[RMDB]
RNA sequence: GGGAACGACUCGAGUAGAGUCGAAAACACGAAAGUUGGCUAAUCCUGGUCGGACAUCAGGGGGUUAGUGCACUGGCAUAAGCCACCUUGGCGCUAAUAGAUACUAAUCGUAGCAUAGCUGAAUAAACGAUAGGGCGGAUUUCGAUCCGCCCUAUCGAAAAGAAACAACAACAACAAC
Reactivity to 2A3 in 0.01 (KOAc 150mM, MgCl2 10mM, bicine 150mM(pH8.5), 24C), signal-to-noise 1, nucleotides 027 to 126: c040a000c000g060a030a000a070g090u150u000g000g040c040u040a000a000u000c000c000u000g030g040u110c100g040g060a050c040a070u050c020a000g100g000g080g000g000u030u010a000g000u050g110c000a000c170u020g000g050c090a050u120a180a130g000c000c050a060c000c000u010u170g050g000c010g030c000u000a000a000u000a230g040a000u050a140c000u100a210a000u050c000g000u000a020g040c070a110u040a140g010c000u030g030a030a130u200a300a130a000
Reactivity to DMS in 0.01 (KOAc 150mM, MgCl2 10mM, bicine 150mM(pH8.5), 24C), signal-to-noise 1, nucleotides 027 to 126: c100a080c160g040a050a190a080g040u000u140g050g020c060u050a000a220u100c050c000u000g010g000u000c130g000g000a250c070a000u100c060a010g000g000g000g000g020u050u000a060g000u000g000c000a060c090u070g000g000c000a170u040a280a000g000c000c040a080c160c080u000u000g000g000c000g020c000u070a000a080u000a030g000a120u040a050c050u000a140a160u000c120g000u050a000g010c090a020u000a100g000c040u000g020a100a030u020a150a160a250